The record gives the reactivity of an RNA of 177 nucleotides to 2A3. The RNA was probed in 150 mM KOAc, 10 mM MgCl2 and 150 mM bicine (pH 8.5) at 24 C. For 2A3, 948 sequencing reads were counted. Reactivities are given for positions 27 through 126.
RNA sequence: GGGAACGACUCGAGUAGAGUCGAAAACUUCAGCCGCCACCGCUGCCGAACGUACCGGUGUGUAUGGUGUGAAGGGUUACGGCUUUAUGGAGGGGUUUCGUGUGUUAGGUCCCACCGCAGCACUCGGGCUGCGCUAGCGGUUCGCCGCUAGCGCAGCAAAAGAAACAACAACAACAAC
Reactivity to 2A3 in 0.01 (KOAc 150mM, MgCl2 10mM, bicine 150mM(pH8.5), 24C), signal-to-noise 2, nucleotides 027 to 126: c030u040u030c000a020g060c030c000g000c000c000a010c000c000g000c020u040g130c030c020g130a190a010c090g000u040a030c000c000g000g050u000g010u050g010u060a280u260g110g000u260g020u070g040a000a000g060g000g020u060u100a000c000g020g000c000u030u050u020a060u020g020g000a040g010g040g100g020u010u110u110c060g000u110g030u000g040u010u090a140g020g060u020c010c020c000a020c050c000g060c030a070g020c000a000c030u020c050g020g030